An RNA of 177 nucleotides, treated with DMS and 2A3 and read out base by base. Reactivities are rounded to 0.1 and cut off at 0 and 3. For DMS, 12,883 sequencing reads were counted. Values cover nucleotides 27 to 126. DMS adducts were read by reverse transcription with MarathonRT.
[RMDB]
RNA sequence: GGGAACGACUCGAGUAGAGUCGAAAAGAUAUGGAGUUACCCAGGCGACGACGUAUACUCCAUCGGAAACGAUGGAGGUAUACAUCAGCCUGGUAACUCCUAAGUCAAACCUUGCUUCGGCAAGGAACGAGUAAAUAUGGUUCGCCAUAUUUACUCGAAAAGAAACAACAACAACAAC
Reactivity to DMS in 0.01 (KOAc 150mM, MgCl2 10mM, bicine 150mM(pH8.5), 24C), signal-to-noise 7, nucleotides 027 to 126: g000a040u000a300u010g000g000a020g010u000u000a000c170c070c050a020g000g010c010g020a150c300g000a020c050g010u000a010u000a020c000u000c000c000a000u000c000g010g000a150a120a210c010g010a010u000g000g000a010g010g010u000a000u000a000c000a070u010c010a160g010c000c000u010g000g000u000a000a000c000u000c000c000u000a010a050g010u000c040a130a130a220c000c000u000u010g010c000u000u020c230g030g000c000a010a010g010g000a030a070
Reactivity to 2A3 in 0.01 (KOAc 150mM, MgCl2 10mM, bicine 150mM(pH8.5), 24C), signal-to-noise 6, nucleotides 027 to 126: g030a010u060a040u130g000g000a000g000u010u000a020c100c130c090a030g010g000c030g070a240c160g020a040c140g050u000a010u000a020c010u000c000c000a000u000c000g010g030a080a030a040c010g000a000u000g000g010a020g030g030u010a000u000a010c010a070u050c030a010g000c000c000u000g000g010u000a000a000c000u000c000c000u000a020a010g000u000c020a070a060a120c000c000u000u010g020c010u050u080c300g200g000c010a000a010g000g010a020a060